About this RNA
Chemical mapping of a 207-nucleotide RNA with 2A3. 2A3 adducts were read by reverse transcription with SuperScript II with manganese. The reactions ran in a buffer of 150 mM KOAc, 10 mM MgCl2 and 150 mM bicine (pH 8.5), at 24 C.

RNA sequence: GGGAACGACUCGAGUAGAGUCGAAAAGGCGUAGCCGACAACAUGCCCAGGUAGCUCAGACCUUCAAGGCUACGGUGCGUUGCGACGCACGGUCUGAUUCUUCACAACGACGUUCACCGCGUCUUCUACAACCGGCAAAGAUUCGUCUUUGCCGGAACCGUACCACAGUGUUCGCACUGUGGUACGGAAAAGAAACAACAACAACAAC
Reactivity to 2A3 in 0.01 (KOAc 150mM, MgCl2 10mM, bicine 150mM(pH8.5), 24C), signal-to-noise 2, nucleotides 027 to 156: g140g010c020g000u000a010g000c050c000g100a030c050a140a000c020a060u200g050c030c010c000a040g000g080u060a030g040c010u000c070a020g000a010c010c010u100u130c050a090a010g000g000c000u010a000c000g000g000u000g000c000g000u020u070g040c150g130a000c000g000c010a010c020g000g000u000c010u000g010a040u050u040c100u150u150c060a050c050a240a090c060g010a000c000g070u130u230c120a020c080c040g020c000g030u010c000u050u030c020u080a140c060a180a100c000c000g000g000c000a000a010a010g000a050u000u130c200g020u010c140u000u000u010g000c000c000g010g000a000a000